The record gives the reactivity of an RNA of 177 nucleotides to 2A3 and DMS. Source: RMDB library RFM100, as collected in RNAgym.
[RMDB]
RNA sequence: GGGAACGACUCGAGUAGAGUCGAAAAACGAUGGUUACGACCAUCGAAACCGAUGAUGGCAACAGGGUAGCUACCGAAGUUGAUGUGGAAGCCGUUCCAGUCUGAGGAGACUAGCUACGGCUAGUCAGCUCUGCGGAAUUUUCGAAUUCCGCAGAGCAAAAGAAACAACAACAACAAC
Reactivity to 2A3 in 0.01 (KOAc 150mM, MgCl2 10mM, bicine 150mM(pH8.5), 24C), signal-to-noise 3, nucleotides 027 to 126: a000c000g000a000u000g040g000u080u090a090c190g060a040c040c010a010u000c000g000a050a020a000c020c000g020a070u070g020a010u080g030g010c020a010a000c000a040g060g060g060u070a060g030c030u070a060c010c010g060a130a090g090u100u130g040a160u200g040u050g030g010a060a010g000c010c010g020u050u040c010c010a030g080u060c030u050g050a030g130g020a050g000a030c000u010a000g000c010u020a010c130g040g000c000u000a000g020u020c000a020
Reactivity to DMS in 0.01 (KOAc 150mM, MgCl2 10mM, bicine 150mM(pH8.5), 24C), signal-to-noise 1, nucleotides 027 to 126: a080c020g000a000u000g000g000u030u030a160c140g020a100c000c000a030u000c000g020a060a040a150c000c000g000a110u080g010a050u000g000g010c030a020a090c080a090g000g000g060u000a080g000c040u000a110c000c020g000a000a160g000u010u000g000a110u010g010u010g000g000a190a000g010c020c030g000u020u010c020c020a110g040u020c020u020g000a170g000g030a120g000a000c040u000a000g000c000u000a070c180g040g040c000u000a000g000u000c020a080
Conditions: 150 mM KOAc, 10 mM MgCl2 and 150 mM bicine (pH 8.5), 24 C. DMS (dimethyl sulfate) methylates the pairing face of unpaired adenines and cytosines.